This 207-nucleotide RNA was probed chemically with 2A3 and DMS. High 2A3 reactivity points to a flexible backbone, as in loops and unpaired stretches. For DMS the reverse transcriptase was MarathonRT. The reactions ran in a buffer of 150 mM KOAc, 10 mM MgCl2 and 150 mM bicine (pH 8.5), at 24 C. Values cover nucleotides 27 to 156.

RNA sequence: GGGAACGACUCGAGUAGAGUCGAAAAUAUGAAAUCAGUCUUACAGUUUUUGAAAUGUAGCCAGCAUUUGUAAGGCUAAACCUUUUUCAUGAACUGAAUUUAAGUGAAUAACCAAGCCACAGUUCCUCCUCAAAUGGAGAGUGAUGAUCGACAUUUGAGGUGAGUGUCAAUUCGUUGACACUCACCUAAAAGAAACAACAACAACAAC
Reactivity to 2A3 in 0.01 (KOAc 150mM, MgCl2 10mM, bicine 150mM(pH8.5), 24C), signal-to-noise 4, nucleotides 027 to 156: u250a060u050g030a010a040a060u110c020a020g100u000c010u020u030a030c010a060g030u020u050u100u160u190g060a040a020a020u050g010u060a030g010c010c020a020g030c060a170u120u110u180g050u120a080a090g000g000c010u030a060a060a090c020c000u060u110u010u040u020c030a040u030g030a040a020c020u000g040a140a140u130u140u050a070a030g030u030g080a080a060u090a080a000c030c040a020a020g050c050c020a060c010a020g020u060u010c000c000u030c010c000u050c020a030a060a030u050g000g010a010g000a010g030u070g040a050u050g020a030u040c020g030a030c040a070u050u030u040g030
Reactivity to DMS in 0.01 (KOAc 150mM, MgCl2 10mM, bicine 150mM(pH8.5), 24C), signal-to-noise 2, nucleotides 027 to 156: u000a090u000g010a070a100a090u020c070a110g000u000c030u000u000a130c010a030g010u000u000u000u000u000g000a080a100a040u000g020u000a060g040c050c050a180g020c080a170u000u000u000g040u000a040a140g000g000c020u000a030a050a180c060c000u000u000u040u000u000c000a040u000g000a070a100c040u020g010a090a060u010u010u000a070a150g000u010g000a060a130u000a070a130c030c060a070a110g010c080c030a070c060a090g030u000u010c040c010u000c010c030u000c020a040a040a110u000g000g000a040g010a110g020u010g010a120u000g010a060u000c030g020a080c070a120u000u000u000g010